Source: RMDB library M2PK50, as collected in RNAgym. This 177-nucleotide RNA was probed chemically with 2A3 and DMS. 2A3 adducts were read by reverse transcription with SuperScript II with manganese. The 2A3 profile rests on 8,057 reads. Reactivities are rounded to 0.1 and cut off at 0 and 3.
RNA sequence: GGGAACGACUCGAGUAGAGUCGAAAACGCGUCAGAUUCGUCUGACGCGAAAGCAUAGAACAGCGCUAUCAUGUAUUAUAGUUCUAUGCAACUAUAGCGCAAAAACGAUACCGUUCGCGGUAUCGAAGUACUGUACCUUCUUCGGAAGGUACAGUACAAAAGAAACAACAACAACAAC
Reactivity to 2A3 in 0.01 (KOAc 150mM, MgCl2 10mM, bicine 150mM(pH8.5), 24C), signal-to-noise 5, nucleotides 027 to 126: c020g000c000g000u000c000a000g000a040u010u060c110g070u000c100u000g000a000c000g010c000g000a000a000a000g020c010a010u010a010g010a030a020c040a060g010c020g000c040u060a040u160c070a130u210g240u270a180u260u140a080u120a070g020u000u010c010u010a010u020g000c000a010a000c010u090a020u080a140g020c020g000c020a040a010a020a020a040c000g000a000u000a000c010c000g010u040u030c220g000c010g090g000u000a000u000c000g000a030a000
Reactivity to DMS in 0.01 (KOAc 150mM, MgCl2 10mM, bicine 150mM(pH8.5), 24C), signal-to-noise 2, nucleotides 027 to 126: c020g010c000g000u010c000a000g000a010u000u010c230g020u000c000u010g020a020c000g020c010g000a010a010a110g010c010a000u000a010g010a010a040c010a120g030c010g030c010u000a100u000c230a080u010g010u000a110u010u010a070u010a120g010u000u000c000u000a000u000g000c000a100a070c090u010a070u000a030g010c000g030c030a120a060a050a060a170c020g000a010u000a000c000c000g000u000u010c180g020c010g000g000u010a000u010c000g000a020a050